[RMDB]
RNA sequence: GGGAACGACUCGAGUAGAGUCGAAAAAAAAUCCCAGUGUUAUUGGUGUUUAUCAUAAACUUGGAGAACGUGUACGCCAAGCUAUCUUAAACACUGUUAAAUUUUGUGACCACAUGGUCAAGGCUGGAAGGUGGAGAGUUCGCUCUCCACAAAAGAAACAACAACAACAAC
Reactivity to DMS in 0.01 (KOAc 150mM, MgCl2 10mM, bicine 150mM(pH8.5), 24C), signal-to-noise 3, nucleotides 027 to 129: a020a000a010a020u070c050c010c000a000g020u000g030u050u030a060u020u030g000g000u010g000u000u000u000a000u000c140a090u000a010a070a090c030u000u030g040g000a100g040a090a130c000g020u060g050u050a120c100g060c000c000a000a000g000c070u010a030u010c070u000u010a000a000a000c020a020c030u020g020u000u080a030a080a130u010u030u010u030g020u010g000a000c030c020a160c280a090u030g020g020u000c020a060a040g000g060c000u000g040g020a120a040g000
Reactivity to 2A3 in 0.01 (KOAc 150mM, MgCl2 10mM, bicine 150mM(pH8.5), 24C), signal-to-noise 6, nucleotides 027 to 129: a000a000a000a000u060c000c000c000a000g030u120g070u170u120a240u130u300g020g000u000g020u000u040u020a040u040c050a030u050a040a060a100c010u000u000g000g000a080g050a130a030c140g080u120g060u240a030c030g030c020c000a000a000g000c000u000a020u020c010u020u010a000a000a000c010a000c010u000g120u030u120a070a130a120u180u280u080u060g140u040g000a000c000c020a060c060a230u130g000g000u000c010a000a000g050g010c030u050g070g010a030a060g180